[RMDB]
RNA sequence: GGGAACGACUCGAGUAGAGUCGAAAAUUAAAGCGCGAAAAAGAUCGAUCGAUCGUUUCAACGCGCAAGUCGAAGUUUGAUACGGGCAUACUAGCUAGCUAGCUAGCAAAACAAACUUCGUAAAAAAGGACAACAUUAACUUCGGUUAAUGUUGUCCAAAAGAAACAACAACAACAAC
Reactivity to 2A3 in 0.01 (KOAc 150mM, MgCl2 10mM, bicine 150mM(pH8.5), 24C), signal-to-noise 1, nucleotides 027 to 126: u130u090a070a060a060g000c000g010c000g030a060a010a000a000a000g000a010u010c020g070a100u160c140g000a020u010c040g070u030u060u030c080a080a050c000g000c010g000c000a010a000g040u000c010g000a010a000g000u000u000u010g100a110u080a120c080g040g120g020c090a010u040a160c080u000a020g000c000u030a050g090c060u060a000g000c000u010a020g000c050a010a120a000a000c000a000a000a000c000u000u000c020g010u020a010a120a000a000a010a050
Reactivity to DMS in 0.01 (KOAc 150mM, MgCl2 10mM, bicine 150mM(pH8.5), 24C), signal-to-noise 2, nucleotides 027 to 126: u040u010a060a090a090g000c010g020c010g010a030a070a010a060a030g000a010u000c000g010a200u000c190g020a000u000c000g020u000u000u000c090a100a070c000g030c000g000c050a050a070g030u010c000g010a000a010g010u010u000u010g020a130u010a100c210g020g010g000c140a120u010a150c000u000a030g000c000u010a160g020c120u030a080g010c020u000a010g010c010a040a070a080a110c010a010a010a000c010u000u000c010g020u000a000a030a020a050a070a070
Conditions: 150 mM KOAc, 10 mM MgCl2 and 150 mM bicine (pH 8.5), 24 C. An RNA of 177 nucleotides, treated with 2A3 and DMS and read out base by base. Reactivities are given for positions 27 through 126. DMS adducts were read by reverse transcription with MarathonRT.